[RMDB]
RNA sequence: GGGAACGACUCGAGUAGAGUCGAAAACUUGAUAGUCUUGUUGACCUUCCGGAGGUCCCUCUCGAGCUCCUCCUUUCUUCUUCUUGCAUCGAUCCACUUUCCGAGUUGCUCUUCUCUCCCCCUCCGGCCCCCCACUUGUUCGCAAGUGGGAAAAGAAACAACAACAACAAC
Reactivity to DMS in 0.01 (KOAc 150mM, MgCl2 10mM, bicine 150mM(pH8.5), 24C), signal-to-noise 8, nucleotides 027 to 129: c000u030u040g000a050u030a050g030u030c020u020u040g030u010u020g000a110c010c010u010u020c010c030g010g010a100g000g000u020c040c020c040u000c010u040c060g000a160g000c120u020c030c000u000c050c050u000u010u020c040u000u000c040u010u000c030u010u040g020c050a050u010c080g030a150u040c020c060a090c070u000u050u040c060c010g000a110g030u000u000g020c080u000c040u010u000c010u020c030u040c000c000c010c020c010u010c000c000g030g040c000c030c000
Reactivity to 2A3 in 0.01 (KOAc 150mM, MgCl2 10mM, bicine 150mM(pH8.5), 24C), signal-to-noise 9, nucleotides 027 to 129: c010u050u060g040a040u110a090g050u030c020u080u140g040u040u070g060a080c000c000u050u060c040c040g040g020a020g010g030u040c010c010c000u030c010u020c010g030a010g010c010u020c000c010u030c010c000u040u060u030c010u030u010c010u040u010c010u030u070g030c020a070u040c040g070a060u050c040c010a050c040u040u080u040c020c010g020a030g050u020u060g060c020u010c000u110u000c010u010c010u040c010c000c000c000c000u010c010c000g020g010c000c000c000